[RMDB]
RNA sequence: GGGAACGACUCGAGUAGAGUCGAAAAGAUAUGGAAGUGUACGCUGAUGACCCGUGGUUGUCACUGUGGGAUCGGAAACGAUCCGUAACAUCAGUGACAACCACGGCAAGGCGACACUUCCUAAGUCCUCCGUAUUGUAGUUCGCUACAAUACGGAGAAAAGAAACAACAACAACAAC
Reactivity to DMS in 0.01 (KOAc 150mM, MgCl2 10mM, bicine 150mM(pH8.5), 24C), signal-to-noise 2, nucleotides 027 to 126: g000a030u000a300u020g010g010a030a010g010u000g010u000a140c040g020c000u000g020a100u020g010a120c300c010c000g000u000g000g010u000u020g020u000c000a000c020u000g070u020g000g000g000a000u010c000g020g030a110a050a300c020g030a020u000c000c000g000u010a050a220c210a080u000c000a020g020u000g000a010c000a040a010c020c010a000c000g000g010c040a020a060g000g020c010g020a050c000a000c010u000u000c000c000u000a020a070g000u000c070
Reactivity to 2A3 in 0.01 (KOAc 150mM, MgCl2 10mM, bicine 150mM(pH8.5), 24C), signal-to-noise 2, nucleotides 027 to 126: g040a080u110a030u240g010g010a010a010g030u050g030u140a300c020g010c030u110g030a300u140g040a160c000c020c040g000u000g000g020u040u030g010u000c000a010c010u030g000u020g060g000g000a000u010c020g040g010a110a120a010c040g010a020u000c000c020g000u090a050a060c030a240u070c020a000g000u000g010a000c000a000a010c000c010a000c000g000g000c000a000a030g000g000c000g020a000c000a000c000u000u000c000c000u010a020a010g020u000c000

The record gives the reactivity of an RNA of 177 nucleotides to DMS and 2A3. The reactions ran in a buffer of 150 mM KOAc, 10 mM MgCl2 and 150 mM bicine (pH 8.5), at 24 C. For DMS, 2,195 sequencing reads were counted. For 2A3 the reverse transcriptase was SuperScript II with manganese. DMS (dimethyl sulfate) methylates the pairing face of unpaired adenines and cytosines. For 2A3, 5,739 sequencing reads were counted. Source: RMDB library TTRINS, as collected in RNAgym.